[RMDB]
Chemical mapping of a 177-nucleotide RNA with 2A3 and DMS. For 2A3, 2,265 sequencing reads were counted. DMS adducts were read by reverse transcription with MarathonRT. It was measured as part of the RMDB library TTRDES. Values are in units of 0.01, from 0 to 300, in steps of 10. The reactions ran in a buffer of 150 mM KOAc, 10 mM MgCl2 and 150 mM bicine (pH 8.5), at 24 C. For DMS, 1,318 sequencing reads were counted.

RNA sequence: GGGAACGACUCGAGUAGAGUCGAAAAGAUAUGGAUUCGGCAUCUUUUGACGGACUCGUUCGGAAACGAACGGCAUGUCCGAUAAGAUGCGAAUCCUAAGUCAAAUCCGCAACUUCGGUUGCGGAAACGGAUCUAAGGAGUUCGCUCCUUAGAUCCGAAAAGAAACAACAACAACAAC
Reactivity to 2A3 in 0.01 (KOAc 150mM, MgCl2 10mM, bicine 150mM(pH8.5), 24C), signal-to-noise 2, nucleotides 027 to 126: g000a000u010a010u080g020g000a000u000u010c040g300g120c070a000u000c090u080u210u300u300g300a300c070g000g010a000c010u000c020g000u000u000c010g000g040a010a030a010c000g040a000a000c000g010g060c120a090u300g010u000c000c020g010a000u090a110a020g000a000u010g000c000g010a000a000u040c000c000u000a030a000g000u000c030a000a050a200u000c000c000g000c000a000a010c000u070u160c300g200g000u000u000g000c000g000g000a000a020a000
Reactivity to DMS in 0.01 (KOAc 150mM, MgCl2 10mM, bicine 150mM(pH8.5), 24C), signal-to-noise 1, nucleotides 027 to 126: g000a060u000a210u000g000g000a000u010u000c010g040g030c000a000u000c000u010u000u000u010g010a280c070g030g020a000c000u000c010g000u000u000c000g010g010a020a030a100c000g020a010a000c000g000g020c300a050u010g000u000c000c000g020a040u000a010a000g020a020u000g000c000g000a000a000u000c000c000u000a000a070g000u000c010a150a110a120u000c000c000g030c000a010a000c000u000u000c220g050g000u000u000g020c000g000g000a010a020a090